RNA sequence: GGGAACGACUCGAGUAGAGUCGAAAAUCAUUUGCUGCACAACUUUAUUCUAUUUUUAUGCUCCUAAAUGACGCAGCUCUAAGUACCCGUGAGUGGCACUUCCGUGCUGUGAGUGCUAUCAAAGGCAACUCAGAUACAGUUUCGACUGUAUCUGAGUAAAAGAAACAACAACAACAAC
Reactivity to 2A3 in 0.01 (KOAc 150mM, MgCl2 10mM, bicine 150mM(pH8.5), 24C), signal-to-noise 5, nucleotides 027 to 126: u050c010a030u030u090u150g010c020u030g040c010a040c020a140a170c110u170u240u150a190u180u050c070u060a220u070u130u020u040u100a130u190g040c040u050c020c030u070a090a110a090u080g020a020c060g010c010a020g000c010u000c010u040a070a050g020u020a060c000c020c040g100u080g100a090g050u160g010g000c000a010c000u110u000c060c050g150u180g080c090u040g010u050g030a020g010u030g000c010u020a020u090c040a070a030a020g050g010c000a020
Reactivity to DMS in 0.01 (KOAc 150mM, MgCl2 10mM, bicine 150mM(pH8.5), 24C), signal-to-noise 3, nucleotides 027 to 126: u010c050a060u000u010u010g000c020u000g000c010a070c070a050a100c130u010u020u000a080u010u010c130u000a050u000u020u000u010u000a030u010g010c040u000c020c010u010a020a040a060u010g010a110c070g010c040a020g000c010u000c060u000a050a080g030u000a080c010c010c040g000u010g000a130g010u010g010g010c010a000c010u000u010c100c060g010u010g030c100u000g020u000g020a090g010u010g000c020u000a070u000c120a060a110a140g000g000c110a090